Source: RMDB library OK3TST, as collected in RNAgym. This 207-nucleotide RNA was probed chemically with 2A3. The 2A3 profile rests on 569 reads. Values cover nucleotides 27 to 156.
[RMDB]
RNA sequence: GGGAACGACUCGAGUAGAGUCGAAAACGUAGGGCGAGUAAACGGCGAUCCCCACGCCGGUGACGGCGAGGGUGCCUUUGCCCGCCUCGGUGGCGGUAUCGAGCAUCAUAGUCUUCGUCCUUUUGGGCGGCCCUUGCGACGCUCCCGGCCCAUGCCGUGGAGGUCUUCUUUUCGAAGAAGACCUCCAAAAAGAAACAACAACAACAAC
Reactivity to 2A3 in 0.01 (KOAc 150mM, MgCl2 10mM, bicine 150mM(pH8.5), 24C), signal-to-noise 1, nucleotides 027 to 156: c020g020u130a120g010g050g000c090g020a080g030u120a060a110a020c080g000g030c010g020a070u100c020c000c030c030a040c000g000c020c020g000g030u090g040a100c000g010g000c020g010a000g020g010g000u030g000c000c000u040u040u020g000c000c020c000g020c000c000u040c040g090g060u120g020g040c040g000g030u060a080u290c030g020a020g070c010a000u100c010a060u050a150g140u020c080u060u070c110g050u000c000c080u110u190u210u200g020g020g000c030g020g000c000c000c040u020u060g010c040g060a030c040g040c030u000c000c040c000g070g000c000c000c030a030u180g020c160c000g140